[RMDB]
RNA sequence: GGGAACGACUCGAGUAGAGUCGAAAAAGAGCGGUGUAGCGGUCUGAGGCUGAGAAGUCUCAGCAGAGGUCAUCGUUGAAUUAUUACUGGUUUAAGAAUACCUCUGAACUUAGACUAGUAGUUGAUAGAUAGAGUAUGUAUUCGUACAUGCUCUAUCAAAAGAAACAACAACAACAAC
Reactivity to 2A3 in 0.01 (KOAc 150mM, MgCl2 10mM, bicine 150mM(pH8.5), 24C), signal-to-noise 9, nucleotides 027 to 126: a000g140a010g000c020g010g010u040g020u070a060g130c030g010g030u060c010u010g000a000g010g000c000u010g020a010g020a120a020g010u010c000u000c000a000g000c000a010g040a050g030g070u050c010a020u020c020g020u030u070g070a130a080u180u080a040u070u030a070c010u010g010g010u010u000u010a010a000g020a050a030u070a130c020c020u050c070u080g050a060a030c000u000u000a000g000a010c000u000a000g010u010a020g010u020u060g070a120u090a170
Reactivity to DMS in 0.01 (KOAc 150mM, MgCl2 10mM, bicine 150mM(pH8.5), 24C), signal-to-noise 9, nucleotides 027 to 126: a070g000a060g000c010g000g020u010g010u100a070g020c050g000g010u050c010u000g000a000g000g010c000u000g000a200g010a180a020g020u000c000u000c000a010g020c030a090g000a090g010g010u010c020a030u000c030g020u000u000g010a110a070u030u020a040u030u010a010c020u010g010g010u000u000u000a010a010g010a100a120u010a140c070c070u010c060u010g000a120a130c010u000u000a010g000a010c000u010a010g010u000a020g010u000u000g010a100u020a110
Chemical mapping of a 177-nucleotide RNA with 2A3 and DMS. Source: RMDB library OK1LIB, as collected in RNAgym. The 2A3 profile rests on 39,663 reads. DMS adducts were read by reverse transcription with MarathonRT.